Background: Chemical mapping of a 177-nucleotide RNA with 2A3 and DMS. The data come from the RNA Mapping Database (RMDB), library OK1LIB. Conditions: 150 mM KOAc, 10 mM MgCl2 and 150 mM bicine (pH 8.5), 24 C. DMS adducts were read by reverse transcription with MarathonRT.
RNA sequence: GGGAACGACUCGAGUAGAGUCGAAAAAGAAGGCCACAUUACACCAAUUAAGGUGGCACAUGUUAAUAAUCUUAAGCUGGGCAGACUUAAGGUCCCAUGCGACUUAAUAACAGCAAGAUAAGGACGACAUUGACUGUGACUUCGGUCACAGUCAAUGAAAAGAAACAACAACAACAAC
Reactivity to 2A3 in 0.01 (KOAc 150mM, MgCl2 10mM, bicine 150mM(pH8.5), 24C), signal-to-noise 3, nucleotides 027 to 126: a000g230a030a000g090g000c020c000a020c000a020u050u110a080c100a060c060c020a020a100u210u140a100a020g100g000u000g000g000c000a030c050a060u100g040u020u010a140a080u110a090a060u060c000u000u010a030a070g000c010u010g010g110g000c080a060g060a100c010u100u080a090a040g080g000u050c050c000c010a100u180g070c070g000a040c000u110u030a010a000u120a160a050c000a000g030c000a000a040g000a010u040a090a020g140g000a010c010g060a050
Reactivity to DMS in 0.01 (KOAc 150mM, MgCl2 10mM, bicine 150mM(pH8.5), 24C), signal-to-noise 2, nucleotides 027 to 126: a110g030a110a160g020g020c040c020a000c040a010u000u030a020c120a220c110c120a100a080u010u010a100a100g010g020u000g000g020c050a110c160a000u010g000u070u000a060a030u040a050a000u000c060u010u000a020a030g030c020u000g000g020g050c150a110g000a070c100u020u050a020a030g000g030u000c010c020c190a240u060g000c130g000a000c060u010u000a030a030u080a100a190c110a070g000c080a000a050g030a040u000a140a070g000g010a040c090g040a200